[RMDB]
RNA sequence: GGGAACGACUCGAGUAGAGUCGAAAAGUUGGUGAAUAUCUUCCUCCCUGGCUGGACUGGGAGCUCCUGGUGGGCAGGCACCACCCAGACCUGAGGCUUUAUGCACAGUAAACAUUUGAUGCUUGUUUUUUGAAUGAAUGAAUAAAUGGAUUAAAAAGACGUAAUGGAAAUUCGUUUCCAUUACGUCAAAAGAAACAACAACAACAAC
Reactivity to DMS in 0.01 (KOAc 150mM, MgCl2 10mM, bicine 150mM(pH8.5), 24C), signal-to-noise 1, nucleotides 027 to 156: g000u000u000g010g040u020g000a100a180u010a090u000c050u000u000c070c050u010c010c010c030u030g010g020c030u000g040g010a250c030u010g000g010g020a130g000c070u010c030c040u030g000g040u010g050g020g000c070a060g030g010c070a080c000c020a110c000c010c010a160g000a080c050c040u000g010a130g000g010c050u000u010u000a100u020g010c000a050c050a100g040u020a080a110a090c040a060u010u000u000g000a010u000g000c040u010u000g010u000u000u000u000u000u000g010a080a090u000g010a050a140u010g010a090a110u000a050a070a120u010g020g030a190u010u010a040a090a100a150a180
Reactivity to 2A3 in 0.01 (KOAc 150mM, MgCl2 10mM, bicine 150mM(pH8.5), 24C), signal-to-noise 2, nucleotides 027 to 156: g020u030u030g000g070u120g040a100a020u060a040u170c070u040u040c020c010u030c010c000c020u010g070g000c020u040g000g020a040c040u040g000g000g050a060g050c010u070c030c030u070g060g000u040g020g030g020c010a010g010g000c010a020c000c000a020c000c000c000a050g010a150c010c020u040g010a040g110g020c000u020u070u130a020u080g010c010a010c020a040g050u110a010a170a010c050a090u020u060u220g040a030u060g030c040u010u000g000u010u050u020u030u070u030g080a100a070u030g000a000a030u050g030a010a000u100a200a090a050u120g050g010a030u200u000a140a060a050a040a070